[RMDB]
RNA sequence: GGGAACGACUCGAGUAGAGUCGAAAAGGGGUCGAUUCUUGGAUUUAUCCAUGAUAUGUGUUGUCAGCUGAAGCCUCCACGGCUUGGAUUUACACAUGUUUGUGGAUUGUCAGAAUCGACGGAGGCACCCAAAGGUGUCUCGUUCGCGAGACACCAACUUAGUAGAAAGGUUCGCCUUUCUACUAAGAAAAGAAACAACAACAACAAC
Reactivity to 2A3 in 0.01 (KOAc 150mM, MgCl2 10mM, bicine 150mM(pH8.5), 24C), signal-to-noise 9, nucleotides 027 to 156: g060g010g020g000u010c010g000a010u020u030c040u140u210g220g020a100u280u300u170a050u080c000c000a000u020g020a000u010a000u020g010u000g020u040u060g020u030c040a040g030c150u180g120a060a010g010c010c010u100c210c120a070c090g000g000c000u030u090g060g000a030u180u180u300a020c000a000c000a010u030g080u080u050u220g020u020g000g010a010u020u050g000u000c000a000g000a010a000u000c000g000a000c010g000g010a010g010g050c050a060c020c010c030a070a070a030g000g000u000g000u000c000u000c000g010u030u060c290g010c000g050a000g000a000c000a000c000c000a000a010
Reactivity to DMS in 0.01 (KOAc 150mM, MgCl2 10mM, bicine 150mM(pH8.5), 24C), signal-to-noise 3, nucleotides 027 to 156: g000g010g040g020u000c010g000a040u000u000c010u000u010g040g010a080u000u000u000a050u000c000c000a030u010g010a030u000a010u010g050u000g010u000u000g010u000c030a120g010c080u020g010a070a100g010c030c020u010c080c110a300c120g030g000c020u000u010g020g010a030u000u000u000a040c010a010c010a010u000g040u000u010u010g120u000g010g010a030u010u000g020u000c010a070g010a050a030u000c020g000a020c010g020g020a040g060g010c070a130c010c010c020a080a140a180g010g030u000g020u010c000u000c010g050u000u000c240g010c040g010a030g000a040c020a010c010c010a020a050

Source: RMDB library RNAMAK, as collected in RNAgym. This 207-nucleotide RNA was probed chemically with 2A3 and DMS. Conditions: 150 mM KOAc, 10 mM MgCl2 and 150 mM bicine (pH 8.5), 24 C. The DMS profile rests on 8,922 reads.